[RMDB]
Structure probing data (2A3 and DMS) for a 177-nucleotide construct. Conditions: 150 mM KOAc, 10 mM MgCl2 and 150 mM bicine (pH 8.5), 24 C. It was measured as part of the RMDB library OK2TRN. Reactivities are given for positions 27 through 126.
RNA sequence: GGGAACGACUCGAGUAGAGUCGAAAAGAGAUGUAUUUGGGUUUAGCGUGGUCGUAUGUUGUCUACUAUAGUCCAAGUGAAGUUCGAGUGGUGGCAGAAGGAUUUGAUUUUGCUAAUGGAAUCAACAGCGUACGAUGUGAUUCGUCACAUCGUACGCAAAAGAAACAACAACAACAAC
Reactivity to 2A3 in 0.01 (KOAc 150mM, MgCl2 10mM, bicine 150mM(pH8.5), 24C), signal-to-noise 1, nucleotides 027 to 126: g090a010g000a010u100g020u110a070u040u120u100g050g000g070u000u080u140a100g010c070g050u060g070g020u010c000g000u020a050u100g200u110u010g000u010c050u070a050c030u050a090u100a120g100u170c020c030a050a070g020u040g050a020a040g030u080u110c020g030a000g000u020g040g020u000g000g000c000a000g050a110a040g060g020a020u000u090u000g010a010u000u000u060u030g000c040u020a120a040u150g010g010a000a060u000c030a060a000c020a010
Reactivity to DMS in 0.01 (KOAc 150mM, MgCl2 10mM, bicine 150mM(pH8.5), 24C), signal-to-noise 2, nucleotides 027 to 126: g010a110g000a080u000g000u000a040u000u000u000g010g000g010u010u010u000a060g020c080g020u000g010g020u020c040g010u000a080u010g030u000u010g010u020c040u000a080c060u000a130u000a070g030u000c040c030a090a070g000u000g000a050a090g000u000u020c040g020a070g040u010g010g020u000g010g010c060a040g000a060a100g000g000a110u000u000u010g000a080u010u000u000u000g020c100u000a050a120u010g000g000a020a060u000c070a050a060c300a150